RNA sequence: GGGAACGACUCGAGUAGAGUCGAAAAGUGACAUUGUGGUGUUAGGGCCUGCAUAUGGAAGAGUUAGAACGAUGCAUGAUGAAAAUGGUAAUAGCUUAAAACAAGCAACCCCUUCAAAACCUGUGCACGCGUAUUUGAUAUUCGUAUCAAAUACGCGAAAAGAAACAACAACAACAAC
Reactivity to 2A3 in 0.01 (KOAc 150mM, MgCl2 10mM, bicine 150mM(pH8.5), 24C), signal-to-noise 2, nucleotides 027 to 126: g080u050g010a070c030a060u090u110g030u060g100g030u040g070u180u120a070g000g070g030c010c030u050g000c040a050u030a050u130g110g010a050a040g050a020g070u060u090a070g010a070a010c030g010a040u070g000c060a040u040g030a010u040g050a100a060a010a080u080g010g000u080a080a110u030a200g000c000u050u000a000a230a070a050c020a070a000g000c000a000a020c000c010c020c040u040u100c070a150a100a030a090c010c000u070g060u060g070c040a000
Reactivity to DMS in 0.01 (KOAc 150mM, MgCl2 10mM, bicine 150mM(pH8.5), 24C), signal-to-noise 2, nucleotides 027 to 126: g020u010g020a060c100a060u000u010g030u000g000g010u000g050u020u000a040g020g010g000c080c060u000g020c060a060u000a090u000g000g010a070a090g000a100g000u000u010a120g000a050a050c150g000a090u000g000c060a030u020g000a100u000g010a040a040a060a080u000g010g010u000a060a080u000a080g010c010u000u000a030a060a100a120c150a050a020g010c030a070a100c160c000c040c050u000u030c040a060a060a070a130c050c040u000g050u000g010c080a090

About this RNA
This 177-nucleotide RNA was probed chemically with 2A3 and DMS. Source: RMDB library OK2TST, as collected in RNAgym. Values cover nucleotides 27 to 126. The DMS profile rests on 1,315 reads.